Description:
Structure probing data (2A3 and DMS) for a 177-nucleotide construct. For DMS, 3,446 sequencing reads were counted. Values are in units of 0.01, from 0 to 300, in steps of 10. The 2A3 profile rests on 2,952 reads. Conditions: 150 mM KOAc, 10 mM MgCl2 and 150 mM bicine (pH 8.5), 24 C.
[RMDB]
RNA sequence: GGGAACGACUCGAGUAGAGUCGAAAAGGACAGGCUAACAUCAAUGCAAUAAACUAAACCUGCCUCAGAAAAGCUCAGUAAAGAAUUGCAUCGUACAUUCUGACAGAAAGCAGCUAUGCAUGGAUGACACAAGGAAUCAGUUCGCUGAUUCCUUGUGAAAAGAAACAACAACAACAAC
Reactivity to 2A3 in 0.01 (KOAc 150mM, MgCl2 10mM, bicine 150mM(pH8.5), 24C), signal-to-noise 3, nucleotides 027 to 126: g030g010a040c010a020g020g000c030u050a120a030c030a060u040c050a050a030u070g000c020a030a130u110a200a140a030c060u090a070a080a000c000c000u020g020c020c030u050c020a050g130a030a130a010a000g000c030u000c080a000g040u140a080a200a040g010a050a060u080u110g000c020a110u100c080g040u050a010c000a080u040u040c020u050g050a020c030a030g120a030a110a000g040c060a000g000c020u060a010u080g020c000a010u010g010g020a010u060g010a010
Reactivity to DMS in 0.01 (KOAc 150mM, MgCl2 10mM, bicine 150mM(pH8.5), 24C), signal-to-noise 4, nucleotides 027 to 126: g000g010a080c020a030g000g030c080u000a100a150c060a060u010c050a060a030u010g000c010a050a100u010a060a110a090c100u010a050a120a110c020c010u000g000c020c010u010c130a120g000a100a070a100a100g010c030u000c030a070g010u000a050a080a070g010a040a020u000u000g000c050a070u010c160g020u010a050c100a060u000u000c010u000g000a080c080a080g000a100a050a120g000c050a040g000c040u010a050u000g000c030a020u000g010g010a070u000g010a300